[RMDB]
RNA sequence: GGGAACGACUCGAGUAGAGUCGAAAAGCCGAGCUGAACGACUGGCUCGGCGAGGAGGUCGUGAGGUUCGACGAUUACGAGAUUCCGCCGGCGCCGGUCGCGGCGUAGCGCGCAGGCCAGUGCAACAAAUAUACUCACCCUUCGGGGUGAGUAUAUUAAAAGAAACAACAACAACAAC
Reactivity to 2A3 in 0.01 (KOAc 150mM, MgCl2 10mM, bicine 150mM(pH8.5), 24C), signal-to-noise 1, nucleotides 027 to 126: g000c000c040g010a030g000c020u030g030a190a050c040g030a000c100u050g000g020c010u000c000g010g000c000g010a050g000g010a030g020g220u030c020g020u020g020a030g070g100u150u190c090g080a060c060g070a150u050u050a020c020g010a020g020a240u040u050c020c000g000c010c030g000g050c130g000c010c000g000g040u040c010g010c000g040g000c010g020u000a040g030c070g020c010g010c070a030g040g000c000c000a020g040u010g060c010a010a000c010a030
Reactivity to DMS in 0.01 (KOAc 150mM, MgCl2 10mM, bicine 150mM(pH8.5), 24C), signal-to-noise 3, nucleotides 027 to 126: g010c020c010g010a130g010c010u010g010a150a160c070g000a030c020u010g010g000c000u000c000g010g010c010g000a040g000g010a070g000g010u000c010g010u010g010a070g030g010u000u000c210g020a130c190g010a140u010u010a030c050g030a070g020a200u000u000c010c010g000c040c030g000g000c150g020c020c000g010g000u010c030g030c030g010g000c030g010u000a060g000c070g030c060g010c050a100g010g000c000c010a070g000u000g010c060a090a100c150a040
Chemical mapping of a 177-nucleotide RNA with 2A3 and DMS. The reactions ran in a buffer of 150 mM KOAc, 10 mM MgCl2 and 150 mM bicine (pH 8.5), at 24 C. Reactivities are given for positions 27 through 126. It was measured as part of the RMDB library OK2TST.